Chemical mapping of a 177-nucleotide RNA with 2A3 and DMS.
The 2A3 profile rests on 5,176 reads.
For DMS the reverse transcriptase was MarathonRT.
For DMS, 7,976 sequencing reads were counted.
The RNA was probed in 150 mM KOAc, 10 mM MgCl2 and 150 mM bicine (pH 8.5) at 24 C.
RNA sequence: GGGAACGACUCGAGUAGAGUCGAAAAUGGCUCGUCGACCAAUCCAAUGUAUGUUUCAGAUACUGUCACAUUUGUUAAUGUGGCGACAGGCGCCCAGGCUGUUGCCCGAUCCCUUGAUUGGUCCAAGCUAAGUGUUACACUUCGGUGUAACACUUAGAAAAGAAACAACAACAACAAC
Reactivity to 2A3 in 0.01 (KOAc 150mM, MgCl2 10mM, bicine 150mM(pH8.5), 24C), signal-to-noise 3, nucleotides 027 to 126: u090g040g010c040u040c090g100u070c050g030a010c000c010a010a010u030c030c040a060a070u120g020u070a100u040g050u040u060u060c050a050g050a190u090a180c030u040g000u040c010a000c010a030u020u080u120g150u080u170a110a070u110g060u110g050g000c000g010a000c000a000g050g040c010g010c030c040c020a010g060g020c010u020g020u060u020g010c010c000c020g040a110u060c010c020c000u030u070g010a030u000u010g010g000u000c030c020a060a010g020
Reactivity to DMS in 0.01 (KOAc 150mM, MgCl2 10mM, bicine 150mM(pH8.5), 24C), signal-to-noise 6, nucleotides 027 to 126: u000g010g010c050u000c080g020u010c110g010a030c020c010a030a030u000c030c200a060a070u010g010u000a060u000g000u010u010u010c110a100g000a160u010a060c080u010g010u000c050a030c020a030u000u000u010g010u010u010a070a070u000g020u000g010g000c000g010a020c050a020g000g010c060g000c050c020c020a180g010g010c010u000g000u000u000g010c010c010c030g000a100u000c030c020c030u000u000g010a040u000u000g000g000u010c020c210a070a120g000